[RMDB]
RNA sequence: GGGAACGACUCGAGUAGAGUCGAAAAGUCACUGAGCAGUCAGGACAGUUGCUGGGGCUGGGCGUGGGCAGCACCAUUGCCGGAACCACCGAUACCACCACCAAAGAGCGCGAGCCUACCGAUCCGACGCUGAUGGAAUACGUGGAAUACAAAUGCGAUUAACCCCUCAAUUCGUUGAGGGGUUAAUAAAAGAAACAACAACAACAAC
Reactivity to 2A3 in 0.01 (KOAc 150mM, MgCl2 10mM, bicine 150mM(pH8.5), 24C), signal-to-noise 1, nucleotides 027 to 156: g000u000c000a020c240u040g020a050g020c050a040g070u120c000a000g000g040a090c020a020g080u060u070g060c030u000g000g000g040g020c000u040g020g030g000c010g000u000g040g010g000c050a020g030c050a070c020c010a030u050u220g000c000c000g020g010a000a020c000c030a020c010c000g020a030u060a040c000c000a000c030c020a000c010c010a170a110a000g090a030g000c010g000c020g030a050g000c000c060u050a040c050c030g060a050u000c050c000g080a110c000g090c020u050g000a030u080g020g060a060a040u050a070c080g010u000g030g000a000a050u130a110c060a110a100a040u150g090c120g050
Reactivity to DMS in 0.01 (KOAc 150mM, MgCl2 10mM, bicine 150mM(pH8.5), 24C), signal-to-noise 3, nucleotides 027 to 156: g050u000c050a170c030u030g050a100g060c130a120g020u000c020a030g020g020a150c050a220g030u000u000g020c010u010g040g010g010g050c030u000g010g020g030c040g000u000g000g000g030c080a260g020c160a210c040c030a040u000u010g000c020c000g030g020a180a130c020c000a100c030c010g000a240u000a110c030c020a100c000c020a090c010c010a070a100a140g000a070g040c040g060c050g030a060g020c020c030u000a130c060c040g030a120u000c030c020g020a160c030g010c060u000g020a170u000g000g010a100a070u000a040c150g010u060g000g020a090a130u000a150c130a030a030a050u000g010c110g000